[RMDB]
The record gives the reactivity of an RNA of 177 nucleotides to 2A3 and DMS. The 2A3 profile rests on 2,009 reads. It was measured as part of the RMDB library OK2TRN. 2A3 is a SHAPE reagent: it acylates the 2'-hydroxyl of flexible nucleotides of all four kinds. In probing experiments dimethyl sulfate is read out at A N1 and C N3, which are open when not base-paired. The RNA was probed in 150 mM KOAc, 10 mM MgCl2 and 150 mM bicine (pH 8.5) at 24 C.
RNA sequence: GGGAACGACUCGAGUAGAGUCGAAAACUUGUUUGGAUAUUUAUGGUUCUGUAGCAUCUGGACCCCUCCCUGAGAAAUGCAUCACAAUACUCUUAGGUGGUGACAUGGAGUGCUAAUUUUAUAUGGGGUUUAACUGUAGGUUCGCCUACAGUUAAACAAAAGAAACAACAACAACAAC
Reactivity to 2A3 in 0.01 (KOAc 150mM, MgCl2 10mM, bicine 150mM(pH8.5), 24C), signal-to-noise 3, nucleotides 027 to 126: c030u090u060g050u070u100u120g050g000a060u060a100u180u220u080a120u210g040g000u070u010c030u060g070u040a020g050c020a080u030c000u030g010g010a050c000c000c030c000u030c000c000c020u000g030a030g050a050a050a020u060g020c000a020u020c000a000c020a060a140u120a150c030u040c010u130u090a050g040g020u030g020g000u020g040a020c010a000u050g030g020a050g010u080g020c030u070a160a120u050u120u090u090a130u020a070u140g090g000g000
Reactivity to DMS in 0.01 (KOAc 150mM, MgCl2 10mM, bicine 150mM(pH8.5), 24C), signal-to-noise 5, nucleotides 027 to 126: c050u000u010g010u000u000u000g010g010a090u000a040u000u010u000a070u020g010g000u000u000c060u010g010u010a070g020c090a050u000c040u000g010g000a110c020c010c010c020u000c020c010c020u000g010a140g000a090a100a050u010g020c030a030u000c050a050c050a070a120u000a090c120u000c060u000u000a070g020g010u000g000g010u000g000a090c060a060u000g000g010a110g020u000g010c060u010a040a080u010u000u000u010a080u010a120u020g010g010g010